RNA sequence: GGGAACGACUCGAGUAGAGUCGAAAAAGGACGUCCUCCCUGUCUCCUCGGUUCUUCUUCGAUCCGGACCGGCUCAUCUCGGCAAGGGGCGGCAGUCCUCAGUACUCUUACUCUUUCCUAUAAAGAGACGGCUGUGUGUUCGCACACAGCAAAAGAAACAACAACAACAAC
Reactivity to 2A3 in 0.01 (KOAc 150mM, MgCl2 10mM, bicine 150mM(pH8.5), 24C), signal-to-noise 7, nucleotides 027 to 129: a010g030g000a010c010g040u050c000c000u010c000c000c000u000g020u010c040u040c030c030u050c010g010g000u010u010c000u150u030c020u110u110c100g120a130u020c030c040g030g020a020c020c000g010g000c030u040c060a170u020c080u040c040g020g000c030a080a150g000g000g000g000c040g000g000c020a070g000u000c000c000u000c000a000g010u050a060c000u010c000u050u050a050c010u000c000u060u050u020c020c020u100a110u120a140a080a010g080a010g030a040c060g090
Reactivity to DMS in 0.01 (KOAc 150mM, MgCl2 10mM, bicine 150mM(pH8.5), 24C), signal-to-noise 5, nucleotides 027 to 129: a000g010g020a000c100g030u050c030c030u060c020c020c000u010g020u040c010u030c080c040u000c040g020g020u020u020c030u070u050c050u050u090c020g050a000u050c090c090g000g000a130c120c030g030g010c120u030c060a000u030c040u020c090g000g000c090a120a160g050g020g000g040c180g000g000c110a080g040u040c010c010u040c000a000g050u050a030c020u000c030u080u010a060c000u040c060u020u040u030c110c040u060a130u000a060a080a060g030a030g020a110c100g000
This 170-nucleotide RNA was probed chemically with 2A3 and DMS.
The reactions ran in a buffer of 150 mM KOAc, 10 mM MgCl2 and 150 mM bicine (pH 8.5), at 24 C.
For DMS the reverse transcriptase was MarathonRT.
The data come from the RNA Mapping Database (RMDB), library 15KLIB.